[RMDB]
RNA sequence: GGGAACGACUCGAGUAGAGUCGAAAAGUCCUCGCCGCCGUCGCGGGCAGUGUCUAGCCAGGCCUUGACAAGCUAGCCGGAGGAGCGCCUAGGAACCCGAGCCGGAGCUCAGCGAGCGCAGCCUGCAUAAACAACUAAGAUUCGUCUUAGUUGUUUAAAAAGAAACAACAACAACAAC
Reactivity to 2A3 in 0.01 (KOAc 150mM, MgCl2 10mM, bicine 150mM(pH8.5), 24C), signal-to-noise 9, nucleotides 027 to 126: g030u020c000c000u010c020g020c010c020g020c010c010g060u070c040g010c020g060g010g000c010a020g060u050g020u060c030u030a020g020c020c050a050g020g040c000c020u070u090g040a040c020a050a030g030c020u050a030g020c020c000g030g010a060g010g040a050g010c020g020c000c010u040a050g040g050a070a070c010c010c010g010a020g020c010c010g030g010a020g010c010u020c030a020g030c020g040a010g020c030g000c020a010g030c000c000u030g020c020a040
Reactivity to DMS in 0.01 (KOAc 150mM, MgCl2 10mM, bicine 150mM(pH8.5), 24C), signal-to-noise 9, nucleotides 027 to 126: g000u010c020c010u000c070g020c040c030g010c030c040g010u010c080g010c070g010g000g010c040a050g020u010g010u010c050u010a090g010c040c050a110g010g010c030c030u010u010g010a100c120a110a140g010c040u000a090g010c030c020g010g010a110g010g000a100g010c060g010c050c030u000a100g010g010a100a100c060c020c020g010a110g020c020c030g000g000a130g000c040u010c040a080g010c050g000a090g010c040g010c070a080g000c020c010u000g000c080a190
Description:
Source: RMDB libraries RFM100 and RFMREP, as collected in RNAgym. This 177-nucleotide RNA was probed chemically with 2A3 and DMS. DMS adducts were read by reverse transcription with MarathonRT. The reactions ran in a buffer of 150 mM KOAc, 10 mM MgCl2 and 150 mM bicine (pH 8.5), at 24 C. 2A3 adducts were read by reverse transcription with SuperScript II with manganese.